[RMDB]
An RNA of 177 nucleotides, treated with 2A3 and DMS and read out base by base. High 2A3 reactivity points to a flexible backbone, as in loops and unpaired stretches. The RNA was probed in 150 mM KOAc, 10 mM MgCl2 and 150 mM bicine (pH 8.5) at 24 C.
RNA sequence: GGGAACGACUCGAGUAGAGUCGAAAAGGGUGUCGAUCUGCUCCAAGACACCUAGAUCCAUGCUGUCGGGUUUUUACCUUAGGCUCUUUUGAGCGACAGCAACGGAGCAGAUUUUGGAUCUUAAGAAGGGAGUGUGGUAGUUCGCUACCACGUUCCCAAAAGAAACAACAACAACAAC
Reactivity to 2A3 in 0.01 (KOAc 150mM, MgCl2 10mM, bicine 150mM(pH8.5), 24C), signal-to-noise 9, nucleotides 027 to 126: g020g000g000u010g000u010c010g040a030u010c000u010g000c000u000c000c010a100a010g000a000c010a000c000c000u010a020g010a020u040c030c030a050u090g000c000u010g010u010c020g040g020g040u050u050u040u170u230a070c010c000u070u160a160g070g000c000u000c000u010u250u100u300g000a000g000c000g000a000c010a000g000c000a000a010c070g000g000a000g000c000a000g000a000u050u030u010u010g010g000a020u000c010u040u060a150a100g070a100a130
Reactivity to DMS in 0.01 (KOAc 150mM, MgCl2 10mM, bicine 150mM(pH8.5), 24C), signal-to-noise 7, nucleotides 027 to 126: g000g000g000u000g010u000c010g010a050u010c000u000g000c000u000c000c000a070a100g000a030c010a010c000c000u000a020g000a100u020c010c020a140u020g000c000u000g000u000c010g000g000g000u010u030u040u020u050a020c000c000u000u040a120g020g020c000u000c000u010u020u030u040g010a000g010c000g010a010c000a010g010c000a080a070c160g000g000a000g000c000a010g000a060u010u010u010u010g000g000a190u010c020u010u000a100a110g020a140a180